Conditions: 150 mM KOAc, 10 mM MgCl2 and 150 mM bicine (pH 8.5), 24 C.
Structure probing data (2A3) for a 177-nucleotide construct.
The 2A3 profile rests on 393 reads.
2A3 is a SHAPE reagent: it acylates the 2'-hydroxyl of flexible nucleotides of all four kinds.
RNA sequence: GGGAACGACUCGAGUAGAGUCGAAAAUUGAUCUAGCACCUCCUACGUCGUUGAAAACAGCAGCAUCAAAUAUUAGUUCGCUGGUCGAACAAAAGUCACCUUCAUUGCAAUAUGAUACCAGUCCACAUGACUGCUGAGCAUUCGUGCUCAGCAGUCAAAAAGAAACAACAACAACAAC
Reactivity to 2A3 in 0.01 (KOAc 150mM, MgCl2 10mM, bicine 150mM(pH8.5), 24C), signal-to-noise 1, nucleotides 027 to 126: u240u040g080a070u070c070u000a000g000c000a040c000c000u020c000c050u020a000c010g000u110c000g150u000u000g290a000a040a000a000c070a000g000c000a000g120c000a050u030c030a060a240a000u110a040u300u140a050g240u080u050c180g000c050u010g000g000u030c080g030a030a030c040a000a000a050a000g040u050c000a010c000c000u010u300c000a110u070u000g070c000a000a080u110a180u190g000a000u000a070c050c000a080g000u000c000c000a000c000a100